The data come from the RNA Mapping Database (RMDB), library OK2TRN.
Structure probing data (DMS and 2A3) for a 177-nucleotide construct.
The RNA was probed in 150 mM KOAc, 10 mM MgCl2 and 150 mM bicine (pH 8.5) at 24 C.
2A3 adducts were read by reverse transcription with SuperScript II with manganese.
For DMS the reverse transcriptase was MarathonRT.
Reactivities are rounded to 0.1 and cut off at 0 and 3.
The 2A3 profile rests on 1,225 reads.

[RMDB]
RNA sequence: GGGAACGACUCGAGUAGAGUCGAAAAGUGCUGAACGGGCCUAACCUCAAUCUGUUGGGGGUACGUGAGCCGGGUAUCUAUGGCAGCGACACGCUUUCGGAUAUCGAAUCGCGUCUGCAGGCACAGGACUAGGUACGUGCUUCGGCACGUACCUAGUAAAAGAAACAACAACAACAAC
Reactivity to DMS in 0.01 (KOAc 150mM, MgCl2 10mM, bicine 150mM(pH8.5), 24C), signal-to-noise 2, nucleotides 027 to 126: g010u000g000c030u010g000a120a230c110g010g030g000c020c050u030a120a200c030c010u000c030a040a040u020c240u000g040u000u000g000g000g010g040g020u000a010c050g040u000g070a020g040c210c040g030g000g000u000a050u000c020u000a050u030g070g030c100a070g020c040g000a080c210a090c080g020c050u000u000u000c070g000g000a070u000a040u010c000g000a070a100u010c050g000c010g010u000c040u020g000c060a140g000g010c010a060c050a120g000g000
Reactivity to 2A3 in 0.01 (KOAc 150mM, MgCl2 10mM, bicine 150mM(pH8.5), 24C), signal-to-noise 1, nucleotides 027 to 126: g000u000g000c020u030g010a130a070c070g030g020g000c000c000u020a040a050c000c010u050c000a100a070u110c070u220g230u160u050g030g000g000g010g000u020a000c010g000u040g100a010g020c010c000g010g020g000u010a000u010c020u060a160u200g050g000c030a000g000c060g100a060c060a000c230g000c000u060u050u080c060g050g010a050u000a060u130c020g030a010a040u020c040g000c000g080u040c060u030g000c020a000g030g010c000a000c010a050g060g060